[RMDB]
The record gives the reactivity of an RNA of 177 nucleotides to 2A3 and DMS. For DMS, 8,277 sequencing reads were counted. It was measured as part of the RMDB library TTRDES. Reactivities are given for positions 27 through 126. The RNA was probed in 150 mM KOAc, 10 mM MgCl2 and 150 mM bicine (pH 8.5) at 24 C.
RNA sequence: GGGAACGACUCGAGUAGAGUCGAAAAGAUAUGGAAGGAGGGUCGAGAGACGGUCGGAAACGACCGAAUCUCAGUGAGACCUCCUUCCUAAGUCAAACAUCCGGAUUUCGUUCGCGAAAUCCGGAUGCCAUCUCAAAUUGUUCGCAAUUUGAGAUGGAAAAGAAACAACAACAACAAC
Reactivity to 2A3 in 0.01 (KOAc 150mM, MgCl2 10mM, bicine 150mM(pH8.5), 24C), signal-to-noise 4, nucleotides 027 to 126: g000a000u030a010u060g000g010a000a010g010g000a030g070g100g190u140c070g060a010g000a000g010a140c010g020g000u000c000g020g000a010a020a010c010g000a000c030c010g030a030a030u010c000u000c000a030g300u080g040a050g000a000c000c000u000c000c000u000u000c000c000u000a000a000g000u000c000a010a060a170c010a000u000c000c000g000g000a000u000u000u000c030g050u050u070c300g030c010g200a000a000a010u000c000c010g000g000a000u000g010
Reactivity to DMS in 0.01 (KOAc 150mM, MgCl2 10mM, bicine 150mM(pH8.5), 24C), signal-to-noise 5, nucleotides 027 to 126: g010a030u000a130u010g000g000a010a000g000g010a010g000g010g010u000c030g010a080g020a020g000a230c020g000g000u000c010g020g010a020a020a060c000g000a020c000c010g000a030a130u000c000u000c010a300g010u020g010a220g000a060c000c000u000c010c000u000u000c000c000u010a000a050g000u000c020a130a150a300c010a010u000c000c000g010g000a030u000u000u000c000g020u000u010c280g020c020g010a000a010a010u000c000c000g000g000a000u000g010